[RMDB]
RNA sequence: GGGAACGACUCGAGUAGAGUCGAAAAGAUAUGGACAUCGAUCUCUCGAACUACGAUAGGGAUCGGAAACGAUCCCAUAUCGCGAGAGGGAGUCCUAAGUCAAAACUAGAUGCUUCGGCAUCUAGAACGGAAAAUGAAACUUCGGUUUCAUUUUCCGAAAAGAAACAACAACAACAAC
Reactivity to 2A3 in 0.01 (KOAc 150mM, MgCl2 10mM, bicine 150mM(pH8.5), 24C), signal-to-noise 1, nucleotides 027 to 126: g000a000u030a010u080g000g000a020c010a270u180c160g090a250u000c000u020c010u000c010g010a280a240c210u160a110c300g010a040u010a000g000g000g000a020u030c010g000g000a050a020a000c010g010a000u030c030c000c000a020u020a000u010c000g080c060g010a000g000a010g040g040g010a020g010u000c000c000u000a120a000g030u020c010a140a040a060a060c000u000a000g000a010u000g000c050u030u150c300g110g000c000a000u000c000u000a000g000a010a020
Reactivity to DMS in 0.01 (KOAc 150mM, MgCl2 10mM, bicine 150mM(pH8.5), 24C), signal-to-noise 1, nucleotides 027 to 126: g010a030u000a260u000g000g000a000c010a150u020c180g000a150u010c000u010c010u000c000g000a160a120c120u000a300c030g010a010u010a040g030g000g030a010u000c000g020g010a020a020a050c010g020a010u010c000c000c000a000u000a000u000c040g000c020g010a010g020a060g010g000g000a060g020u000c000c010u010a020a060g000u010c010a040a060a070a180c000u000a000g000a000u000g010c000u000u000c110g040g000c000a000u000c000u000a000g020a070a130